The record gives the reactivity of an RNA of 177 nucleotides to DMS and 2A3. High 2A3 reactivity points to a flexible backbone, as in loops and unpaired stretches. Conditions: 150 mM KOAc, 10 mM MgCl2 and 150 mM bicine (pH 8.5), 24 C. Source: RMDB library RFMREP, as collected in RNAgym.
RNA sequence: GGGAACGACUCGAGUAGAGUCGAAAACCUGGGUGGUAGCAGCGAUGACUUAACGGCGAUGAACACCGGGUACGAAACCUGCUACACUUGCGGCCGCUGCGCGGAUGCCACGAACCCACAGCCUCUCACAUACGUUUUGGUUCGCCAAAACGUAUGUAAAAGAAACAACAACAACAAC
Reactivity to DMS in 0.01 (KOAc 150mM, MgCl2 10mM, bicine 150mM(pH8.5), 24C), signal-to-noise 2, nucleotides 027 to 126: c020c010u020g010g040g010u000g000g020u000a010g010c020a010g040c110g040a050u000g000a300c270u000u020a160a170c090g030g010c020g000a160u000g000a130a170c120a060c020c030g000g000g010u000a050c050g000a120a080a030c080c010u000g010c030u010a040c070a080c090u010u000g020c100g000g010c050c050g000c020u000g010c060g020c070g000g000a130u010g000c020c060a020c100g010a080a070c020c010c000a100c100a090g000c070c070u000c050u020c140
Reactivity to 2A3 in 0.01 (KOAc 150mM, MgCl2 10mM, bicine 150mM(pH8.5), 24C), signal-to-noise 2, nucleotides 027 to 126: c010c010u030g030g020g000u100g050g040u020a000g000c010a000g000c060g140a190u070g020a060c030u050u030a090a030c020g000g000c040g220a220u170g160a160a040c030a010c030c010g030g000g020u060a030c030g020a070a040a020c010c000u000g000c000u030a000c010a010c040u070u100g030c020g040g010c010c020g000c060u140g010c040g020c040g080g010a030u050g000c010c020a100c050g050a050a050c010c020c000a010c000a030g020c000c010u000c000u020c020
Values cover nucleotides 27 to 126. For 2A3 the reverse transcriptase was SuperScript II with manganese.